[RMDB]
RNA sequence: GGGAACGACUCGAGUAGAGUCGAAAAGUCAUCGUGCGGAUCACUAGUCUAUCAUGAGACGAUCGCUCAUGCUCGGAUCACGCUAGCGUACUGAGUACUAGCGUACGCUCAUGCAUGGUCCAUGCCACGCUCCCACCUUGUUCGCAAGGUGGGAGCGAAAAGAAACAACAACAACAAC
Reactivity to 2A3 in 0.01 (KOAc 150mM, MgCl2 10mM, bicine 150mM(pH8.5), 24C), signal-to-noise 2, nucleotides 027 to 126: g050u060c040a110u040c100g040u020g030c040g060g030a010u070c010a060c300u160a040g090u000c020u020a260u160c030a060u130g060a000g020a050c060g020a090u020c030g000c000u010c030a020u100g010c010u030c100g000g030a040u060c010a010c050g020c010u040a010g000c010g020u060a010c030u120g080a040g160u180a120c170u110a050g180c010g010u010a010c010g050c000u040c090a030u140g010c000a000u010g000g000u000c000c000a010u100g040c010c000a070
Reactivity to DMS in 0.01 (KOAc 150mM, MgCl2 10mM, bicine 150mM(pH8.5), 24C), signal-to-noise 1, nucleotides 027 to 126: g000u020c050a150u000c110g010u000g010c270g000g000a040u000c090a180c200u040a230g020u000c080u000a070u010c050a090u000g000a010g000a110c050g010a080u000c050g060c000u010c070a070u000g010c040u000c130g040g000a060u000c030a000c080g020c000u000a040g010c010g000u000a060c010u010g000a120g010u000a110c130u000a030g010c100g020u010a060c070g000c020u000c140a040u000g000c010a090u000g000g010u010c050c030a150u020g020c070c080a070
Annotation:
The record gives the reactivity of an RNA of 177 nucleotides to 2A3 and DMS. The RNA was probed in 150 mM KOAc, 10 mM MgCl2 and 150 mM bicine (pH 8.5) at 24 C. Values cover nucleotides 27 to 126.